[RMDB]
RNA sequence: GGGAACGACUCGAGUAGAGUCGAAAACACAUGGUGUUCGCACCAUGUGAAAAAGAUAUGGAAACUCCUCAGUGGCCUUGAAGAUAUAUCGGAAACGAUAUAUUGGAGCCACGAGGAGGUUUCCUAAGUCAAAAACGGACCGAUUCGUCGGUCCGAAACUACUCCAAAAGUUCGCUUUUGGAGUAGUAAAAGAAACAACAACAACAAC
Reactivity to 2A3 in 0.01 (KOAc 150mM, MgCl2 10mM, bicine 150mM(pH8.5), 24C), signal-to-noise 2, nucleotides 027 to 156: c000a000c010a000u010g000g020u030g050u090u160c200g070c090a000c000c000a000u000g000u000g000a080a010a000a000a000g060a040u110a050u080g000g000a000a000a010c000u010c020c000u020c110a120g000u000g010g000c030c040u130u110g030a080a020g010a020u010a000u010a000u010c000g030g000a050a070a070c010g010a000u000a000u000a000u030u010g020g000a010g000c000c010a000c000g000a000g000g000a000g010g000u000u000u000c000c000u020a100a040g030u030c040a020a000a090a080a080c020g000g000a000c020c010g000a020u020u070c190g040u010c000g100g020u010c000c010g000a010a000
Reactivity to DMS in 0.01 (KOAc 150mM, MgCl2 10mM, bicine 150mM(pH8.5), 24C), signal-to-noise 1, nucleotides 027 to 156: c000a000c000a000u000g010g010u020g050u010u010c260g020c010a030c010c010a010u000g020u010g000a010a060a010a100a170g010a120u000a290u000g010g010a040a030a040c000u000c000c040u000c000a120g090u000g030g040c010c140u020u000g020a160a300g000a010u000a010u000a010u000c000g010g010a180a140a300c000g010a000u010a000u000a010u000u000g000g010a050g030c010c000a000c010g000a010g000g000a010g010g000u010u000u000c000c000u010a040a120g030u020c050a060a070a040a110a150c040g000g000a010c000c020g000a020u000u010c210g040u000c000g050g060u000c000c000g030a020a040